This 177-nucleotide RNA was probed chemically with DMS and 2A3. The reactions ran in a buffer of 150 mM KOAc, 10 mM MgCl2 and 150 mM bicine (pH 8.5), at 24 C. It was measured as part of the RMDB libraries RFM100 and RFMREP. DMS adducts were read by reverse transcription with MarathonRT.

RNA sequence: GGGAACGACUCGAGUAGAGUCGAAAAGCCAUACUACGGUGCAACGCCCUGUAAAGUAAACGAUGACCCAUAGUGAACUUCGCGGUAAAAUACGUAUCAAAUUGAAAAAUUGCUGCUGACCUGGAACCUUUUAAAUCAGUUUCGACUGAUUUAAAAGAAAAGAAACAACAACAACAAC
Reactivity to DMS in 0.01 (KOAc 150mM, MgCl2 10mM, bicine 150mM(pH8.5), 24C), signal-to-noise 8, nucleotides 027 to 126: g010c020c020a110u030a080c090u000a080c070g010g010u000g010c050a090a070c100g010c040c020c010u010g010u020a060a080a080g010u020a050a090a070c090g000a090u010g000a090c040c020c030a080u010a090g010u010g010a080a080c050u000u000c060g010c030g000g000u010a050a050a050a080u020a050c080g010u020a070u010c090a030a070a080u030u030g000a050a060a050a080a090u020u000g010c010u000g000c020u000g010a070c030c010u010g000g000a070a090c090
Reactivity to 2A3 in 0.01 (KOAc 150mM, MgCl2 10mM, bicine 150mM(pH8.5), 24C), signal-to-noise 9, nucleotides 027 to 126: g020c010c000a040u060a060c060u030a030c070g040g010u050g030c030a090a030c060g030c000c000c020u030g070u100a120a120a050g030u020a030a100a040c060g030a060u070g060a070c000c010c020a060u070a060g090u090g060a060a030c030u050u050c050g000c030g020g020u050a020a040a040a050u170a060c040g030u040a040u130c070a050a120a100u080u110g100a060a030a030a020a030u080u050g000c010u010g000c000u020g020a040c000c000u010g010g030a010a040c000